This 177-nucleotide RNA was probed chemically with 2A3 and DMS. The reactions ran in a buffer of 150 mM KOAc, 10 mM MgCl2 and 150 mM bicine (pH 8.5), at 24 C.
RNA sequence: GGGAACGACUCGAGUAGAGUCGAAAAGCAUGGGUUUGGAUUAUGACAGGCCCAUCCCCCUGGACCUCUCAUAGUGCCCCAUGCCAGAGCAAACUGUGGCCCCGAACCAUUGCCUGGCUUCUGUACCAAUACCUUCCGAAUUCGUUCGGAAGGUAUUAAAAGAAACAACAACAACAAC
Reactivity to 2A3 in 0.01 (KOAc 150mM, MgCl2 10mM, bicine 150mM(pH8.5), 24C), signal-to-noise 7, nucleotides 027 to 126: g040c030a020u010g010g010g020u060u100u130g090g080a080u080u080a060u210g070a020c000a010g010g010c000c000c000a030u060c010c000c000c000c000u010g010g020a040c000c000u020c000u000c020a020u030a060g030u070g080c020c000c000c000a010u030g000c000c010a020g020a010g020c020a030a060a070c050u110g030u080g100g010c000c020c010c010g030a020a020c020c010a040u020u080g020c010c020u010g020g000c000u040u020c010u060g040u050a050c010c010
Reactivity to DMS in 0.01 (KOAc 150mM, MgCl2 10mM, bicine 150mM(pH8.5), 24C), signal-to-noise 7, nucleotides 027 to 126: g020c130a010u000g000g000g010u020u020u010g000g010a100u020u030a060u010g010a110c080a010g000g000c010c000c010a020u030c030c020c010c030c070u000g000g000a060c010c000u000c130u000c020a030u000a030g010u010g000c040c010c000c030a040u010g000c000c030a050g010a120g010c040a030a070a080c110u010g010u010g020g010c020c010c020c040g010a100a110c060c050a070u000u020g010c050c020u010g000g000c040u010u000c010u020g020u020a120c140c090

The data come from the RNA Mapping Database (RMDB), libraries RFM100 and RFMREP. Reactivities are rounded to 0.1 and cut off at 0 and 3. DMS adducts were read by reverse transcription with MarathonRT.